[RMDB]
RNA sequence: GGGAACGACUCGAGUAGAGUCGAAAAAGUUCUAGUCCUCACCUAAGAUCAGACUUACACGGCCCUCAAAGGAAGAGCACUCGGUUGGGCUUUGUGGUGGGGAUUAGUGUCUCAUUUUUAGUCCCAAAUUAAAAACGAGAUUUUGGGCUGUACAUCAAUUAUAAUCGUGCUUCGGCACGAUUAUAAUAAAAGAAACAACAACAACAAC
Reactivity to DMS in 0.01 (KOAc 150mM, MgCl2 10mM, bicine 150mM(pH8.5), 24C), signal-to-noise 1, nucleotides 027 to 156: a050g020u000u010c000u010a020g000u000c000c010u000c010a060c040c000u000a110a120g010a070u010c070a150g000a130c040u000u000a120c140a140c080g020g000c000c020c010u030c090a090a140a210g020g010a060a160g020a060g000c050a100c040u000c050g010g000u010u000g030g010g080c010u000u010u010g080u000g000g110u000g000g030g080g000a020u000u000a020g010u020g020u010c020u000c040a040u020u010u010u000u010a110g010u010c030c060c090a000a080a130u010u000a010a000a010a000a030c040g010a010g030a260u000u030u000u000g000g010g000c130u000g010u000a090c120a210u000c020a170
Reactivity to 2A3 in 0.01 (KOAc 150mM, MgCl2 10mM, bicine 150mM(pH8.5), 24C), signal-to-noise 1, nucleotides 027 to 156: a000g140u130u040c000u000a000g000u000c000c000u010c000a000c000c010u120a160a100g020a150u150c150a090g200a290c060u060u090a030c070a030c120g020g000c000c040c020u030c090a160a160a020g080g000a020a060g010a050g170c060a020c030u060c060g110g000u030u010g060g000g060c000u050u030u050g120u050g000g000u000g000g000g000g000a000u000u000a000g000u000g010u000c000u000c020a070u160u210u080u030u180a030g070u200c000c000c000a000a000a000u090u070a050a070a040a010a050c100g040a060g010a150u000u030u000u070g000g000g030c000u050g050u110a070c060a120u060c030a080
The record gives the reactivity of an RNA of 207 nucleotides to DMS and 2A3. For 2A3 the reverse transcriptase was SuperScript II with manganese. The reactions ran in a buffer of 150 mM KOAc, 10 mM MgCl2 and 150 mM bicine (pH 8.5), at 24 C. It was measured as part of the RMDB library OK3TST. Values cover nucleotides 27 to 156.